Chemical mapping of a 177-nucleotide RNA with DMS and 2A3. Source: RMDB library TTRDES, as collected in RNAgym.
[RMDB]
RNA sequence: GGGAACGACUCGAGUAGAGUCGAAAAGAUAUGGAUGUUCCCACUCGAAAUGAAGCAGCUUUCGGAAACGAAAGCUGGGUUUCAGUGGGAGACAUCCUAAGUCAAAACGUGAAGUUCGCUUCACGAAUCUUACUCAGAGGUUCGCCUCUGAGUAAGAAAAAGAAACAACAACAACAAC
Reactivity to DMS in 0.01 (KOAc 150mM, MgCl2 10mM, bicine 150mM(pH8.5), 24C), signal-to-noise 3, nucleotides 027 to 126: g010a040u000a300u000g000g000a010u000g010u000u000c000c000c000a010c010u010c190g030a020a010a030u010g020a220a240g050c000a010g000c020u010u000u000c000g010g000a140a120a260c000g000a010a010a010g010c000u000g000g000g030u000u000u000c010a010g000u000g020g010g000a080g010a010c000a000u000c000c000u000a020a130g010u000c050a110a080a130a200c040g030u000g000a010a000g030u000u010c300g020c000u000u000c000a010c010g000a090a130
Reactivity to 2A3 in 0.01 (KOAc 150mM, MgCl2 10mM, bicine 150mM(pH8.5), 24C), signal-to-noise 3, nucleotides 027 to 126: g010a020u080a010u170g010g000a010u010g000u000u010c030c030c010a000c000u110c180g080a060a090a120u290g130a300a110g270c000a000g000c000u020u000u010c010g020g060a100a090a110c020g000a000a000a000g000c000u000g010g000g020u020u040u060c040a010g010u010g000g000g000a090g050a030c000a000u020c010c000u010a100a010g040u050c050a010a020a110a160c040g010u000g010a010a010g020u080u230c300g100c160u000u000c000a000c000g010a030a080

For 2A3, 5,607 sequencing reads were counted.